This 177-nucleotide RNA was probed chemically with DMS and 2A3. For DMS, 13,920 sequencing reads were counted. For DMS the reverse transcriptase was MarathonRT. Conditions: 150 mM KOAc, 10 mM MgCl2 and 150 mM bicine (pH 8.5), 24 C.
[RMDB]
RNA sequence: GGGAACGACUCGAGUAGAGUCGAAAAAGAGGAGGACGCUCAUGGCACGGGUGCUCAUCAUCGGGGCAGGCGGUGUAGGACGUGUGGCCACGCACAAGUGUGCGCAGUAUCCUGAGAUCUUCUCCGACUUAGAAUUCUAGUUCGCUAGAAUUCUAAGAAAAGAAACAACAACAACAAC
Reactivity to DMS in 0.01 (KOAc 150mM, MgCl2 10mM, bicine 150mM(pH8.5), 24C), signal-to-noise 7, nucleotides 027 to 126: a090g010a110g010g010a070g010g020a060c130g010c030u000c040a080u000g010g010c100a060c070g000g010g020u000g010c050u000c050a070u010c090a080u000c070g000g000g010g010c040a050g000g010c050g010g020u010g010u010a070g010g010a050c060g020u000g010u000g010g010c020c020a100c040g000c090a040c090a150a110g010u010g010u000g010c020g010c050a060g020u000a090u000c030c010u000g000a070g010a100u000c050u000u000c020u000c010c060g010a180
Reactivity to 2A3 in 0.01 (KOAc 150mM, MgCl2 10mM, bicine 150mM(pH8.5), 24C), signal-to-noise 6, nucleotides 027 to 126: a010g080a030g030g010a010g020g020a020c070g010c050u020c040a060u100g040g000c020a010c070g070g050g030u070g030c020u020c030a100u050c000a030u060c060g040g000g020g000c030a020g050g030c030g010g020u060g020u060a040g030g050a030c060g080u070g030u070g130g000c020c000a020c020g080c000a040c010a190a190g120u110g020u030g180c020g000c010a020g030u050a050u050c010c010u020g030a050g020a100u030c020u060u010c010u010c020c010g020a030